[RMDB]
RNA sequence: GGGAACGACUCGAGUAGAGUCGAAAAGGUUUCUCGUUUAACCCUUGAAGACACCGCCCGUUCAGAGGGUAUCUCUCGAACCCGAAAUAACUAAAGCCAACGUGAACUUUUGCGGACCUCUGGUCCGACAGGGAAUGUUGUUCGCAACAUUCCCUGUAAAAGAAACAACAACAACAAC
Reactivity to 2A3 in 0.01 (KOAc 150mM, MgCl2 10mM, bicine 150mM(pH8.5), 24C), signal-to-noise 1, nucleotides 027 to 126: g010g000u020u050u030c040u010c090g030u010u100u110a120a070c040c000c000u020u050g090a110a030g040a020c010a020c030c050g020c000c000c040g020u070u020c090a090g050a100g120g000g050u040a080u060c050u010c000u030c070g040a070a050c000c020c030g000a000a000a150u100a020a000c070u100a090a020a020g050c020c020a040a030c080g020u070g100a060a100c000u000u070u080u230g010c010g000g000a010c010c010u200c180u260g030g000u010c010c000g000
Reactivity to DMS in 0.01 (KOAc 150mM, MgCl2 10mM, bicine 150mM(pH8.5), 24C), signal-to-noise 2, nucleotides 027 to 126: g040g000u020u000u000c030u010c070g000u000u000u000a090a070c030c030c000u020u000g010a140a150g000a050c030a040c040c100g020c020c010c040g020u010u010c080a140g020a070g010g000g010u000a040u000c030u010c030u000c100g020a010a100c030c050c010g000a110a050a080u000a060a070c050u010a030a050a130g020c020c050a040a060c100g020u010g000a060a050c160u000u000u000u010g030c030g000g000a020c000c040u010c280u020g020g020u000c010c000g020

The record gives the reactivity of an RNA of 177 nucleotides to 2A3 and DMS. High 2A3 reactivity points to a flexible backbone, as in loops and unpaired stretches. The RNA was probed in 150 mM KOAc, 10 mM MgCl2 and 150 mM bicine (pH 8.5) at 24 C. For 2A3, 902 sequencing reads were counted. For DMS the reverse transcriptase was MarathonRT.